[RMDB]
RNA sequence: GGGAACGACUCGAGUAGAGUCGAAAACUGUGGAUGGGCAGCCGGCACCGUCUCUGCGCUGGCUCUUCAAUGGCUCCGUGCUCAAUGAGACCAGCUUCAUCUUCACUGAGUUCCUGGAGCCGGCAGACCACGCCAUAUAGUUCGCUAUAUGGCGUGGAAAAGAAACAACAACAACAAC
Reactivity to DMS in 0.01 (KOAc 150mM, MgCl2 10mM, bicine 150mM(pH8.5), 24C), signal-to-noise 3, nucleotides 027 to 126: c100u000g010u020g000g020a060u010g010g000g020c100a090g040c020c020g030g030c020a140c040c030g000u000c030u020c030u000g010c300g010c010u000g000g000c120u010c010u010u000c080a040a050u010g000g010c000u010c210c180g010u000g020c010u000c070a070a090u010g000a040g010a080c030c010a030g010c020u000u000c090a110u000c090u010u000c130a140c110u020g000a050g000u000u000c040c070u020g040g000a050g030c000c000g000g000c020a130g000a140
Reactivity to 2A3 in 0.01 (KOAc 150mM, MgCl2 10mM, bicine 150mM(pH8.5), 24C), signal-to-noise 1, nucleotides 027 to 126: c030u070g060u160g070g010a070u010g030g000g010c070a030g040c000c000g030g000c020a000c030c010g070u010c020u040c030u060g080c000g000c050u040g010g060c050u010c010u140u060c030a100a130u080g010g000c010u050c130c120g100u150g010c030u040c110a030a060u030g000a000g040a060c030c020a030g010c000u050u090c030a080u000c000u180u110c060a080c180u100g010a010g030u030u110c000c030u060g000g000a000g000c000c000g000g000c010a000g010a000